[RMDB]
This 207-nucleotide RNA was probed chemically with 2A3.
It was measured as part of the RMDB library M2RFPK.
Reactivities are given for positions 27 through 156.
RNA sequence: GGGAACGACUCGAGUAGAGUCGAAAACGGUCCUGCCAUGAGACCGUAACGAGGACAUGUCGCCUCGAAUGGCGUCGGGGAGCCGGCAGCUUACCCCAAGCAUGAGCGCCUAAUGCCGGUACCCGGGUAUACGCUACCCCGUUCGCGGGGUAGCGAAGCUUUAUUAACGUUUCGACGUUAAUAAAGCAAAAGAAACAACAACAACAAC
Reactivity to 2A3 in 0.01 (KOAc 150mM, MgCl2 10mM, bicine 150mM(pH8.5), 24C), signal-to-noise 2, nucleotides 027 to 156: c010g000g000u000c010c010u040g010c000c000a060u130g020a090g020a030c000c020g040u040a000a010c010g010a010g020g010a010c050a180u260g020u180c160g060c000c000u000c010g000a010a010u000g000g030c040g040u080c000g010g000g000g010a100g100c000c000g000g000c010a010g000c020u000u070a070c000c020c010c090a020a020g050c040a060u140g060a020g040c030g070c010c040u100a120a030u070g000c000c010g010g000u030a030c000c000c020g020g000g010u200a160u060a090c020g000c010u030a000c000c000c020c000g010u020u030c070g010c000g050g000g000g000u000a000g000c010g000a020a000